Description
Structure probing data (DMS and 2A3) for a 177-nucleotide construct. 2A3 adducts were read by reverse transcription with SuperScript II with manganese. In probing experiments dimethyl sulfate is read out at A N1 and C N3, which are open when not base-paired. For 2A3, 126,864 sequencing reads were counted. Reactivities are given for positions 27 through 126. The DMS profile rests on 137,067 reads.
RNA sequence: GGGAACGACUCGAGUAGAGUCGAAAAUCAUCUAUUGAGGUCGGAGAUUAGAUUCAAUUGGCAUGUGAGCUCGAUUGGUACAGGCUUGUCAGCCCAGGAUCCAAUCUUGAACACAGAAACCUACCGCGAUUGUAACUCGUUUCGACGAGUUAUAGUCAAAAGAAACAACAACAACAAC
Reactivity to DMS in 0.01 (KOAc 150mM, MgCl2 10mM, bicine 150mM(pH8.5), 24C), signal-to-noise 9, nucleotides 027 to 126: u010c070a080u000c050u000a080u010u000g010a080g010g020u000c050g010g010a120g010a080u000u010a070g010a070u000u000c080a070a120u010u000g010g020c120a130u000g020u000g000a050g010c010u000c060g000a020u000u000g000g010u000a100c080a180g000g000c000u000u010g010u010c250a080g010c010c000c070a230g000g000a110u010c000c000a010a010u000c000u000u000g000a020a030c010a020c020a050g000a080a080a090c030c020u000a110c070c060g010c190
Reactivity to 2A3 in 0.01 (KOAc 150mM, MgCl2 10mM, bicine 150mM(pH8.5), 24C), signal-to-noise 9, nucleotides 027 to 126: u050c010a010u000c020u120a110u060u160g060a050g030g040u040c030g050g030a080g020a090u070u120a080g110a190u110u040c030a060a090u090u050g040g020c070a050u050g010u010g020a020g000c010u000c020g010a010u010u020g010g000u020a030c020a020g000g010c000u100u190g210u270c110a000g000c000c010c040a090g080g080a050u050c000c000a000a000u000c000u000u010g000a010a000c010a000c000a000g080a070a050a020c000c010u030a050c020c040g060c060